[RMDB]
RNA sequence: GGGAACGACUCGAGUAGAGUCGAAAAUGGCUCCGACCCCACGGCAGCGUCUAGGGGUGAAUGUUUACAGCUGCUGAAGCCACAGUGGGCGUGUGUUACAGGAUGCUCUUUUAGUUCAGCCAUCCGAGAGCUUACAUGCGUUCGCGUAUGUGAGCUCAAAAGAAACAACAACAACAAC
Reactivity to 2A3 in 0.01 (KOAc 150mM, MgCl2 10mM, bicine 150mM(pH8.5), 24C), signal-to-noise 9, nucleotides 027 to 126: u050g020g010c010u020c040c020g070a090c010c000c000c020a040c040g040g010c040a050g070c030g050u060c070u120a080g010g020g030g030u050g060a080a060u120g030u100u130u120a090c050a020g010c010u030g010c000u020g050a070a010g030c020c010a050c030a060g050u140g020g060g010c050g010u080g020u020g020u060u080a050c030a040g020g020a040u060g020c010u020c000u060u160u050u130a110g020u070u100c040a020g030c050c010a030u020c020c010g080a090
Reactivity to DMS in 0.01 (KOAc 150mM, MgCl2 10mM, bicine 150mM(pH8.5), 24C), signal-to-noise 9, nucleotides 027 to 126: u020g000g010c020u010c040c030g010a120c040c010c010c030a150c100g010g010c090a070g000c050g010u010c070u010a110g010g000g000g010u010g010a090a060u020g010u010u010u020a070c110a110g010c020u010g010c020u000g010a120a100g010c050c040a070c090a080g010u010g000g000g000c060g000u010g010u010g000u010u020a090c100a100g000g000a050u010g000c030u010c030u010u020u020u020a090g000u010u010c090a060g010c170c030a050u010c020c020g000a230
Chemical mapping of a 177-nucleotide RNA with 2A3 and DMS. The data come from the RNA Mapping Database (RMDB), library OK1LIB. DMS (dimethyl sulfate) methylates the pairing face of unpaired adenines and cytosines. For 2A3 the reverse transcriptase was SuperScript II with manganese.